About this RNA: Source: RMDB library RSTRND, as collected in RNAgym. Chemical mapping of a 207-nucleotide RNA with DMS and 2A3. The DMS profile rests on 2,471 reads. For 2A3 the reverse transcriptase was SuperScript II with manganese. Conditions: 150 mM KOAc, 10 mM MgCl2 and 150 mM bicine (pH 8.5), 24 C. DMS adducts were read by reverse transcription with MarathonRT.
RNA sequence: GGGAACGACUCGAGUAGAGUCGAAAAGAAAGGCGUCUGUGGCCGGAUUAACGACUCCGGGUAAGGUAACAGCGUCGGUAGAUGAAGCUUCCCUGACCGGAGGCUGAAAUGGAUCAUCCGCAGCCAAGUCCCUCCUCAGACGCUUUCAAGGUGUCUGCUUAAAAGGAGUGUUCGCACUCCUUUUAAGAAAAGAAACAACAACAACAAC
Reactivity to DMS in 0.01 (KOAc 150mM, MgCl2 10mM, bicine 150mM(pH8.5), 24C), signal-to-noise 1, nucleotides 027 to 156: g000a070a020a060g030g000c010g020u000c010u000g040u000g010g030c020c060g050g000a060u000u020a080a070c070g010a050c070u000c000c020g010g000g000u000a070a050g000g030u000a070a040c120a090g010c020g040u000c020g060g040u010a100g020a180u000g020a100a070g010c030u000u010c030c000c020u000g020a120c030c020g000g010a020g010g030c000u000g000a070a090a160u000g000g000a150u000c070a080u000c040c080g000c070a180g000c010c020a110a200g000u000c030c000c010u000c010c000u000c010a040g000a030c000g010c000u000u000u020c120a050a100g020g020u000g000u010c020u000g030
Reactivity to 2A3 in 0.01 (KOAc 150mM, MgCl2 10mM, bicine 150mM(pH8.5), 24C), signal-to-noise 2, nucleotides 027 to 156: g060a050a070a000g090g030c010g030u030c030u000g000u030g000g000c040c030g060g000a040u120u120a100a050c090g060a020c060u000c000c000g000g040g020u080a030a000g040g000u030a060a040c020a080g060c010g070u050c020g030g060u110a140g020a120u130g030a060a020g000c030u070u080c010c020c000u010g110a020c000c030g000g020a020g000g030c050u060g040a070a160a110u170g040g020a050u130c030a060u030c040c010g030c050a010g050c010c010a030a000g060u030c000c000c000u010c000c010u050c000a000g000a000c000g010c020u000u010u000c000a000a020g030g020u010g030u040c010u030g050